[RMDB]
Record summary:
Structure probing data (2A3 and DMS) for a 177-nucleotide construct. 2A3 adducts were read by reverse transcription with SuperScript II with manganese.
RNA sequence: GGGAACGACUCGAGUAGAGUCGAAAACUGCGGGACCGCGUGCAAUGCGCCGCGGUGCUGGAGCAGGCAGGGUUUGCCAUCGACCUGAAGGAAAGCACACGCAGGGCGGUCAAAUACCGCGGCGGCGAAAUGACCGCAGUUUCGACUGCGGUCAUUUAAAAGAAACAACAACAACAAC
Reactivity to 2A3 in 0.01 (KOAc 150mM, MgCl2 10mM, bicine 150mM(pH8.5), 24C), signal-to-noise 2, nucleotides 027 to 126: c070u080g000c010g000g070g000a010c000c010g000c020g090u080g060c190a120a140u220g100c000g000c000c000g000c010g000g040u040g000c000u000g000g050a040g050c010a030g000g000c000a000g180g000g000u130u120u300g140c030c000a080u220c030g170a300c010c010u030g110a090a090g050g060a040a180a120g080c030a000c000a000c040g000c010a080g030g140g000c000g000g000u030c000a100a070a070u140a130c000c010g020c000g030g000c000g000g000c090g020
Reactivity to DMS in 0.01 (KOAc 150mM, MgCl2 10mM, bicine 150mM(pH8.5), 24C), signal-to-noise 1, nucleotides 027 to 126: c000u000g000c000g080g000g000a090c000c000g000c000g040u030g030c160a150a080u000g000c000g000c030c010g070c000g010g060u000g000c050u000g010g000a170g010c080a010g000g000c040a170g030g030g000u010u040u130g040c110c050a050u020c080g000a090c000c090u000g000a040a060g140g000a180a120a100g030c170a030c040a130c080g000c000a120g010g000g050c000g040g050u050c000a160a120a120u010a170c000c000g000c000g000g030c000g000g020c140g000

Description
For DMS, 1,145 sequencing reads were counted.